[RMDB]
RNA sequence: GGGAACGACUCGAGUAGAGUCGAAAAAAGCGUUGCUGCCACUUGGUGGGAUGCCGCUGUGCCGACACGCUGCUCAAACGCUGGUUGAGGCUGGCUACGGUGAGGUCUGGGCUGUCCUUCCUCCCGGCUACGAGAGGCUGUUCGCAGCCUCUCGUAGAAAAGAAACAACAACAACAAC
Reactivity to DMS in 0.01 (KOAc 150mM, MgCl2 10mM, bicine 150mM(pH8.5), 24C), signal-to-noise 1, nucleotides 027 to 126: a070a050g010c080g050u010u000g010c030u010g000c130c060a100c100u020u000g000g000u000g030g010g000a040u000g020c020c030g000c040u010g010u000g020c060c040g000a110c090a060c140g040c030u000g030c000u020c080a120a050a050c180g010c080u000g000g000u000u000g000a120g020g040c040u000g030g010c010u010a080c100g010g040u000g000a140g020g000u010c090u000g020g000g000c090u010g010u000c030c000u010u000c040c020u000c000c010c000g000g000
Record summary:
This 177-nucleotide RNA was probed chemically with DMS.